Structure probing data (2A3) for a 207-nucleotide construct.
It was measured as part of the RMDB library M2RFPK.
Conditions: 150 mM KOAc, 10 mM MgCl2 and 150 mM bicine (pH 8.5), 24 C.
For 2A3 the reverse transcriptase was SuperScript II with manganese.
[RMDB]
RNA sequence: GGGAACGACUCGAGUAGAGUCGAAAAAGGGAAGAAAAUAAUUUAGAAAGGAGAUUCCGCCCCAGCUUGCGGUGCGGCCGAAAGGCUGUAAGGCAUCCCGGAGAGGGGAGGCAACGCGAAAGCCAAAAACGGUACACCAUCUUCGGAUGGUGUACAAGGAUAUCUACAACUUCGGUUGUAGAUAUCCAAAAGAAACAACAACAACAAC
Reactivity to 2A3 in 0.01 (KOAc 150mM, MgCl2 10mM, bicine 150mM(pH8.5), 24C), signal-to-noise 1, nucleotides 027 to 156: a010g060g020g030a060a060g040a060a240a060a070u180a160a110u090u230u110a140g040a080a100a040g060g040a100g030a050u060u040c010c010g000c000c000c000c000a020g000c020u050u030g030c000g010g020u030g000c000g010g000c000c020g020a040a000a010g000g010c000u010g020u080a050a030g100g000c010a010u010c000c000c020g060g000a090g000a060g000g010g000g000a000g020g000c030a040a040c020g000c010g140a130a010a000g030c000c010a000a070a010a070a000c110g030g000u000a020c000a010c000c000a000u010c000u020u060c050g090g000a000u000g000g000u010g000u000a000c000a000a000